Chemical mapping of a 207-nucleotide RNA with 2A3. 2A3 adducts were read by reverse transcription with SuperScript II with manganese.

RNA sequence: GGGAACGACUCGAGUAGAGUCGAAAAGUCGCAAUAUGUAUUAUGCGGCGUGCGUCGAUGCCAUGCGGUGUAUCAUGUAUAACGCACCGGCGUCAUGUAACGCCAGCGCACUGUGCGGUUGAUUGCGCAUGCGACCACGUGACACAUCGGUCGUGGCGGAGAGGUUUUCCUUCGGGAAAACCUCUCCAAAAGAAACAACAACAACAAC
Reactivity to 2A3 in 0.01 (KOAc 150mM, MgCl2 10mM, bicine 150mM(pH8.5), 24C), signal-to-noise 1, nucleotides 027 to 156: g010u000c000g000c030a010a050u120a110u240g200u060a090u300u100a010u300g010c000g040g000c000g000u010g000c070g100u070c130g030a010u090g000c050c000a000u040g000c060g000g000u050g070u140a020u080c000a020u160g050u120a050u060a180a030c000g000c000a000c000c050g000g000c000g040u080c090a000u160g120u150a170a020c070g000c010c000a050g040c000g000c070a090c080u040g070u140g000c030g000g130u100u130g070a230u080u280g000c020g000c030a030u060g000c000g020a000c000c000a000c000g070u100g070a000c000a000c000a240u000c120g030g130u030c000g000u000g130g000c050